RNA sequence: GGGAACGACUCGAGUAGAGUCGAAAAGAUAUGGAGUGAACUACUGUUAGUCAGGCGUUGAAAUCGGAAACGAUGGAGCCUGGUGGGACAGCACUCCUAAGUCAAAACGGUGUGUUCGCACACCGAACUUGAAAGAAAACUUCGGUUUUCUUUCAAGAAAAGAAACAACAACAACAAC
Reactivity to DMS in 0.01 (KOAc 150mM, MgCl2 10mM, bicine 150mM(pH8.5), 24C), signal-to-noise 4, nucleotides 027 to 126: g000a050u010a300u010g000g000a040g010u000g000a100a070c100u010a300c020u000g010u000u000a300g000u000c000a010g000g010c010g000u000u010g000a070a100a030u000c000g000g010a150a070a170c000g010a010u000g000g000a130g010c020c000u000g000g010u010g020g020g000a020c010a000g000c010a010c020u000c000c000u010a040a110g000u010c030a060a080a110a170c010g040g000u000g010u000g010u000u000c170g020c000a020c010a000c010c000g000a010a060
Reactivity to 2A3 in 0.01 (KOAc 150mM, MgCl2 10mM, bicine 150mM(pH8.5), 24C), signal-to-noise 4, nucleotides 027 to 126: g020a020u100a020u200g010g000a000g000u030g020a130a060c070u260a040c010u300g000u010u030a040g030u040c010a010g010g000c020g300u300u070g010a040a050a000u030c020g010g030a070a080a030c020g010a010u030g010g020a010g000c000c000u000g010g010u020g020g210g000a000c000a010g000c000a000c020u000c000c000u010a160a020g060u040c050a010a030a060a140c030g010g010u010g000u010g020u050u090c280g030c130a000c000a000c000c000g000a020a030